[RMDB]
This 177-nucleotide RNA was probed chemically with DMS and 2A3.
The RNA was probed in 150 mM KOAc, 10 mM MgCl2 and 150 mM bicine (pH 8.5) at 24 C.
RNA sequence: GGGAACGACUCGAGUAGAGUCGAAAACUGUGAGGCUUCGGCCUCACAGAUAGGUUUCUUUUUAGUGAAUUUUCCAAACCCCUUUGUGCAAAAAUCAUUAAACUCGCGUACGUUUCGACGUACGCAACAACCAUUCAUCAUUCGUGAUGAAUGGUUGAAAAGAAACAACAACAACAAC
Reactivity to DMS in 0.01 (KOAc 150mM, MgCl2 10mM, bicine 150mM(pH8.5), 24C), signal-to-noise 3, nucleotides 027 to 126: c000u000g010u000g000a010g000g010c000u000u010c210g030g030c000c000u000c000a000c000a010g020a070u000a060g010g010u000u000u000c000u000u000u000u000u000a030g020u000g000a020a040u000u000u010u000c020c020a020a050a060c040c020c020c060u000u010u000g000u000g010c130a010a030a020a020a070u000c010a020u000u000a030a060a110c300u010c120g000c010g010u000a010c000g000u000u000u010c200g010a010c000g000u000a000c010g010c000a020a060
Reactivity to 2A3 in 0.01 (KOAc 150mM, MgCl2 10mM, bicine 150mM(pH8.5), 24C), signal-to-noise 3, nucleotides 027 to 126: c000u000g000u010g000a000g000g010c040u040u100c300g110g000c000c000u010c000a000c000a000g010a010u030a010g010g000u000u020u050c000u010u100u010u020u050a010g020u000g050a100a090u040u000u040u000c030c000a010a060a130c050c040c000c000u060u100u090g080u070g040c040a000a010a040a020a050u030c010a010u030u120a080a130a050c090u050c150g000c010g000u000a000c000g000u000u040u100c160g060a010c000g000u010a000c000g000c000a000a000